[RMDB]
RNA sequence: GGGAACGACUCGAGUAGAGUCGAAAACCGGAUCUCCCGUUCUCCACACUCCUUCCCCCCCCGGGCUCCUCCAAUAAAAAGGAAAGACCCACCCACUGGGGUCCGACGUCCCACCCUUUCUUACCUUCCAGGGUGUGGUUCGCCACACCCAAAAGAAACAACAACAACAAC
Reactivity to DMS in 0.01 (KOAc 150mM, MgCl2 10mM, bicine 150mM(pH8.5), 24C), signal-to-noise 3, nucleotides 027 to 129: c040c030g080g020a050u010c120u030c040c020c090g000u020u000c050u020c000c050a160c170a130c100u030c030c020u010u070c040c020c030c000c000c030c010c090g040g070g000c020u010c050c020u010c030c030a050a010u000a060a160a050a090a040g020g040a080a060a030g010a080c040c000c020a050c000c000c000a070c000u000g000g000g000g000u020c010c050g030a060c030g030u060c030c030c030a120c040c070c050u080u020u030c010u000u000a170c060c060u010u070c060c140a050
Reactivity to 2A3 in 0.01 (KOAc 150mM, MgCl2 10mM, bicine 150mM(pH8.5), 24C), signal-to-noise 2, nucleotides 027 to 129: c050c000g000g060a030u040c120u030c020c060c020g060u090u000c000u000c060c000a080c000a050c040u030c020c070u000u010c000c000c000c000c000c020c020c040g020g030g020c050u070c010c000u070c000c020a020a130u060a090a150a100a080a000g100g010a060a050a000g040a000c000c000c030a070c050c000c000a050c010u070g000g010g040g040u010c040c010g000a000c050g090u110c000c000c000a050c000c010c030u130u100u030c010u000u000a100c030c010u080u000c030c030a040